[RMDB]
This 177-nucleotide RNA was probed chemically with 2A3 and DMS.
DMS adducts were read by reverse transcription with MarathonRT.
For DMS, 2,288 sequencing reads were counted.
For 2A3, 996 sequencing reads were counted.
It was measured as part of the RMDB library OK1LIB.
RNA sequence: GGGAACGACUCGAGUAGAGUCGAAAAAUAGGUCGUCGAUUCAGCAUUAGAUAAAGGGGGUAAAAUCCCUGUUUUUACAAUUUACAAUAAGCGGUUAAAAUCAUUUUAUCAAUAUGAGUAUCCUAUAAUGAUGAUGUCUGUUCGCAGACAUCAUCAUAAAAGAAACAACAACAACAAC
Reactivity to 2A3 in 0.01 (KOAc 150mM, MgCl2 10mM, bicine 150mM(pH8.5), 24C), signal-to-noise 2, nucleotides 027 to 126: a000u060a010g000g020u030c070g030u020c020g070a030u020u020c000a010g000c070a060u080u090a090g000a050u000a050a010a000g020g000g000g000g000u010a040a150a010a000u040c000c000c000u020g030u020u000u000u030u050a020c000a010a020u090u000u060a110c110a040a170u290a270a000g000c070g180g050u180u160a030a070a040a000u020c040a030u080u000u000u060a100u140c030a020a020u080a020u130g010a010g010u000a000u080c000c000u010a030u060a200
Reactivity to DMS in 0.01 (KOAc 150mM, MgCl2 10mM, bicine 150mM(pH8.5), 24C), signal-to-noise 2, nucleotides 027 to 126: a050u020a050g000g000u010c070g010u010c060g010a130u010u000c040a100g000c050a040u000u040a060g020a070u010a020a060a000g000g000g000g000g000u000a080a140a140a130u040c000c020c020u000g000u000u000u000u000u010a030c040a120a050u000u000u040a100c280a040a090u040a050a040g020c290g000g000u010u010a000a010a040a030u050c010a030u040u000u020u010a010u020c030a120a060u010a010u000g000a040g030u000a040u000c000c000u000a050u090a110